Conditions: 150 mM KOAc, 10 mM MgCl2 and 150 mM bicine (pH 8.5), 24 C. Chemical mapping of a 207-nucleotide RNA with DMS and 2A3. It was measured as part of the RMDB library M2RFPK. The 2A3 profile rests on 3,690 reads. 2A3 adducts were read by reverse transcription with SuperScript II with manganese.
[RMDB]
RNA sequence: GGGAACGACUCGAGUAGAGUCGAAAACGGUUACGCCUUCUUUACCGUUAUCAAGGAAGGUACUCGGCCAUGCUAAGGGAAGCAUUAUUCCUUAGGCGCAUGUCGCCGCCAGCGUGGUGUGAGGGGAAAAAGUAUGCUGGGUUCGCCCAGCAUACAAGUAAUUCUAUCGCUUCGGCGAUAGAAUUACAAAAGAAACAACAACAACAAC
Reactivity to DMS in 0.01 (KOAc 150mM, MgCl2 10mM, bicine 150mM(pH8.5), 24C), signal-to-noise 1, nucleotides 027 to 156: c030g000g020u000u000a100c050g030c020c010u000u000c010u000u010u010a010c010c080g000u000u000a050u000c110a040a040g000g010a030a010g000g000u010a060c030u000c000g020g030c000c010a030u000g050c010u000a230a180g070g010g000a000a010g000c200a240u010u000a150u000u000c020c020u000u000a120g000g000c020g000c030a090u000g030u010c000g000c030c000g030c100c050a050g010c030g050u000g030g000u000g020u010g000a050g000g020g000g030a070a040a050a190a260g020u000a010u000g040c000u010g010g010g040u000u020c300g010c060c000c010a000g040c000a000u000a000c000a010a070
Reactivity to 2A3 in 0.01 (KOAc 150mM, MgCl2 10mM, bicine 150mM(pH8.5), 24C), signal-to-noise 4, nucleotides 027 to 156: c000g010g010u020u020a040c100g030c010c010u010u010c000u040u040u030a030c010c000g240u100u100a040u090c090a010a000g040g000a000a000g020g000u050a060c000u010c010g030g000c000c000a010u010g020c000u040a080a090g020g000g000a010a020g020c080a210u130u160a160u200u100c000c000u030u050a070g020g000c010g000c050a200u280g130u300c020g000c020c000g020c030c040a000g000c010g000u010g000g020u070g100u120g030a040g020g060g010g040a010a000a100a010a030g000u000a000u000g000c000u000g000g000g020u020u040c150g060c020c000c000a000g000c000a000u000a000c000a000a000